[RMDB]
RNA sequence: GGGAACGACUCGAGUAGAGUCGAAAAGCCACCCCAUGGCCUCCGCGUCCGGGGUGUACAGCAGCCGCGUGAUCAGGGCGUACUGCUGCGCGGCGUCGCCCAGCUCGGGCGCCCACACGGCCGCCGGUCGUCGUACAAGGUUCGCCUUGUACGACGAAAAAGAAACAACAACAACAAC
Reactivity to 2A3 in 0.01 (KOAc 150mM, MgCl2 10mM, bicine 150mM(pH8.5), 24C), signal-to-noise 1, nucleotides 027 to 126: g010c020c020a010c010c020c030c000a070u100g020g000c000c020u070c050c070g000c020g020u000c010c000g000g020g010g010u000g030u020a060c050a030g020c020a000g050c000c040g020c020g010u060g090a150u130c030a040g070g080g160c150g140u120a120c000u040g040c020u000g030c000g010c010g000g050c050g110u200c020g000c010c030c010a060g000c010u030c020g000g020g010c000g010c030c000c000a100c010a020c040g010g000c030c000g010c020c070g010g090
Reactivity to DMS in 0.01 (KOAc 150mM, MgCl2 10mM, bicine 150mM(pH8.5), 24C), signal-to-noise 2, nucleotides 027 to 126: g020c050c020a100c010c020c000c030a120u020g020g020c020c000u010c130c220g000c030g020u010c000c130g010g010g010g010u000g000u010a040c220a140g000c040a190g020c090c000g000c010g040u010g000a090u010c040a030g010g000g000c190g000u010a120c020u010g010c160u000g020c030g010c020g010g020c020g000u000c080g010c000c030c000a040g000c010u000c040g020g010g010c000g000c000c120c060a060c210a110c130g000g010c000c010g000c100c130g000g000
Structure probing data (2A3 and DMS) for a 177-nucleotide construct.
Conditions: 150 mM KOAc, 10 mM MgCl2 and 150 mM bicine (pH 8.5), 24 C.
2A3 adducts were read by reverse transcription with SuperScript II with manganese.
For DMS the reverse transcriptase was MarathonRT.